Notes
An RNA of 177 nucleotides, treated with 2A3 and DMS and read out base by base.
RNA sequence: GGGAACGACUCGAGUAGAGUCGAAAAACGAUGUAUGAACCCGCGCGGACCACCGCGCAAGGCUAAAUACUAGUUGGCGACCGAUAGUGAACAAGUACCGCGAGGGAAAGGUGAAAAGAACCGCUGUGCAUAUAUGGGAAUUCGUUCCCAUAUAUGCAAAAGAAACAACAACAACAAC
Reactivity to 2A3 in 0.01 (KOAc 150mM, MgCl2 10mM, bicine 150mM(pH8.5), 24C), signal-to-noise 7, nucleotides 027 to 126: a000c060g010a080u250g000u020a010u030g020a030a020c010c000c010g000c000g000c010g000g050a110c050c020a300c130c000g000c000g000c010a000a020g000g000c000u040a110a000a010u030a030c000u010a020g010u000u010g030g020c020g040a060c010c010g080a100u100a120g110u070g050a070a030c020a090a000g030u030a030c030c010g020c050g050a100g010g030g020a030a040a030g040g020u080g010a030a080a030a060g070a020a010c020c020g010c080u080g030u060
Reactivity to DMS in 0.01 (KOAc 150mM, MgCl2 10mM, bicine 150mM(pH8.5), 24C), signal-to-noise 7, nucleotides 027 to 126: a030c010g000a130u040g020u000a000u010g020a120a210c250c000c090g010c010g010c010g010g000a200c300c300a110c010c000g030c000g020c020a050a020g010g010c010u000a060a120a010u010a020c020u000a200g000u010u000g000g010c090g000a120c020c020g010a080u020a070g000u020g020a090a090c060a050a060g000u010a100c000c030g000c150g010a160g000g010g010a070a090a060g000g010u000g000a060a070a080a090g000a100a100c080c040g000c100u010g010u010
The reactions ran in a buffer of 150 mM KOAc, 10 mM MgCl2 and 150 mM bicine (pH 8.5), at 24 C.
2A3 adducts were read by reverse transcription with SuperScript II with manganese.